Structure probing data (DMS) for a 177-nucleotide construct.

RNA sequence: GGGAACGACUCGAGUAGAGUCGAAAACUGGAUUCUUUCGAGAAUCCAGCAUGUCUAGUCGCUAGCGAACGAUCAACGCUUGCGACUAGACUUUAUUGAUCGCAUUUGCCUCUUUCGAGAGGCAAAAUGAUUUAGGCCUGUUCGCAGGCCUAAAUCAAAAAGAAACAACAACAACAAC
Reactivity to DMS in 0.01 (KOAc 150mM, MgCl2 10mM, bicine 150mM(pH8.5), 24C), signal-to-noise 1, nucleotides 027 to 126: c010u000g000g000a000u000u000c000u000u000u010c110g040a050g040a000a010u000c020c000a010g020c110a030u000g000u000c000u000a000g000u020c000g030c000u000a000g000c000g040a080a070c120g010a130u010c180a110a130c000g010c000u000u000g000c000g000a000c010u000a000g000a000c000u000u010u000a070u010u000g000a050u010c130g010c270a110u000u000u010g010c020c000u010c010u000u000u000c240g010a020g000a000g030g010c000a000a000a020a100